The record gives the reactivity of an RNA of 177 nucleotides to DMS and 2A3.
For 2A3, 826 sequencing reads were counted.

[RMDB]
RNA sequence: GGGAACGACUCGAGUAGAGUCGAAAAACAGAUUUGUGAUAGUCGGUAAGAUACAUGACAGCUGCGCAGCAUCACUUCACGCGCUGUCAUCGGAUGUCUAGAACAUUCCUUCUAAGAAUAGCCACUGAGCAACGAUCGAAUUCGUUCGAUCGUUGCUAAAAGAAACAACAACAACAAC
Reactivity to DMS in 0.01 (KOAc 150mM, MgCl2 10mM, bicine 150mM(pH8.5), 24C), signal-to-noise 1, nucleotides 027 to 126: a030c190a250g000a210u010u000u080g000u010g000a130u000a010g000u000c040g000g000u000a150a000g000a200u000a000c190a000u000g000a000c000a000g080c000u010g300c090g000c120a080g010c220a140u020c240a070c050u000u000c170a130c110g010c010g010c000u010g000u000c000a000u030c060g000g000a060u000g000u000c000u050a150g000a060a030c130a130u000u030c000c000u000u090c050u020a180a090g000a060a110u030a050g030c000c000a080c140u000g000
Reactivity to 2A3 in 0.01 (KOAc 150mM, MgCl2 10mM, bicine 150mM(pH8.5), 24C), signal-to-noise 2, nucleotides 027 to 126: a000c020a000g220a050u130u140u100g000u020g030a110u020a140g000u030c130g000g070u090a170a040g000a070u130a040c040a050u010g000a000c000a000g080c000u250g000c020g050c010a010g030c000a110u140c060a020c000u270u160c060a000c010g010c000g000c000u000g000u000c000a000u000c000g030g000a010u010g000u000c000u080a050g000a120a040c000a150u020u010c020c000u010u050c000u020a210a000g050a060a000u030a050g050c130c020a140c080u180g030